[RMDB]
RNA sequence: GGGAACGACUCGAGUAGAGUCGAAAAACGAUGGCCGUAUAUCGGCCCAAAAGGUACGUCCGAGACUAGGACGUUAAUAGGCCCGGAGUGUAAGCGUACAAAUACGUGGAGCUGAAAAUAAAACAAAAUCAGACGUUAAAUUCGUUUAACGUCUGAUAAAAGAAACAACAACAACAAC
Reactivity to DMS in 0.01 (KOAc 150mM, MgCl2 10mM, bicine 150mM(pH8.5), 24C), signal-to-noise 3, nucleotides 027 to 126: a170c150g010a100u000g000g000c010c000g020u000a130u000a140u000c020g000g020c000c010c140a040a010a060a080g000g000u010a010c000g000u000c010c000g030a200g000a130c180u000a110g000g000a010c020g000u010u010a040a100u000a100g000g020c020c000c040g020g010a080g030u000g020u010a250a080g030c040g020u000a110c110a060a090a110u010a040c030g000u000g010g000a270g030c020u000g000a030a060a050a050u010a030a030a080a080c170a050a060a030
Reactivity to 2A3 in 0.01 (KOAc 150mM, MgCl2 10mM, bicine 150mM(pH8.5), 24C), signal-to-noise 3, nucleotides 027 to 126: a000c090g030a100u120g010g000c010c000g070u030a140u030a030u300c000g020g010c010c010c000a020a080a000a020g020g010u080a000c000g000u010c000c020g020a050g090a110c130u050a040g000g020a000c000g000u010u020a030a060u050a020g080g000c000c050c010g010g090a040g020u040g010u110a040a000g020c010g000u000a030c090a160a280a090u120a050c010g000u020g000g000a010g010c030u050g070a090a060a020a050u260a020a120a020a020c100a030a140a010
Chemical mapping of a 177-nucleotide RNA with DMS and 2A3. For 2A3 the reverse transcriptase was SuperScript II with manganese. The 2A3 profile rests on 2,336 reads. Source: RMDB library M2PK90, as collected in RNAgym. The DMS profile rests on 2,473 reads. The RNA was probed in 150 mM KOAc, 10 mM MgCl2 and 150 mM bicine (pH 8.5) at 24 C.